[RMDB]
RNA sequence: GGGAACGACUCGAGUAGAGUCGAAAACCCUUCCCCCGAGGGUCGCCCAGGAAUGGCGGGACCCACUCGACUGGGGUCCGCGUUCCAUCCUUUCUUACCUUGUGGCCGGCAUGGUCCCAGCCUCCUCCUAGCCAUCCGUUCGCGGAUGGCAAAAGAAACAACAACAACAAC
Reactivity to 2A3 in 0.01 (KOAc 150mM, MgCl2 10mM, bicine 150mM(pH8.5), 24C), signal-to-noise 4, nucleotides 027 to 129: c000c000c000u010u060c000c010c000c000c000g020a080g010g020g000u020c010g030c020c000c010a010g020g060a060a030u070g280g080c040g010g000g000a010c000c030c010a040c030u230c080g190a170c130u060g000g000g000g000u010c000c000g060c000g010u030u000c010c000a050u070c020c000u060u110u070c030u070u080a170c030c020u050u070g040u070g050g030c020c010g020g010c050a090u120g050g000u040c000c000c000a020g020c000c000u000c000c000u010c000c000u010a010
Reactivity to DMS in 0.01 (KOAc 150mM, MgCl2 10mM, bicine 150mM(pH8.5), 24C), signal-to-noise 2, nucleotides 027 to 129: c000c000c020u010u070c000c000c010c020c020g030a000g030g010g040u010c080g040c020c040c040a060g030g080a000a000u020g130g060c050g100g000g030a040c000c000c000a030c120u050c180g090a190c000u000g000g040g010g000u040c000c000g030c030g050u080u010c000c000a170u050c090c110u000u000u000c070u020u040a130c110c080u030u040g050u080g080g000c090c030g030g050c060a120u000g020g010u050c020c030c030a090g020c000c010u000c020c010u010c040c000u020a040
Record summary:
Structure probing data (2A3 and DMS) for a 170-nucleotide construct. The reactions ran in a buffer of 150 mM KOAc, 10 mM MgCl2 and 150 mM bicine (pH 8.5), at 24 C. For 2A3 the reverse transcriptase was SuperScript II with manganese.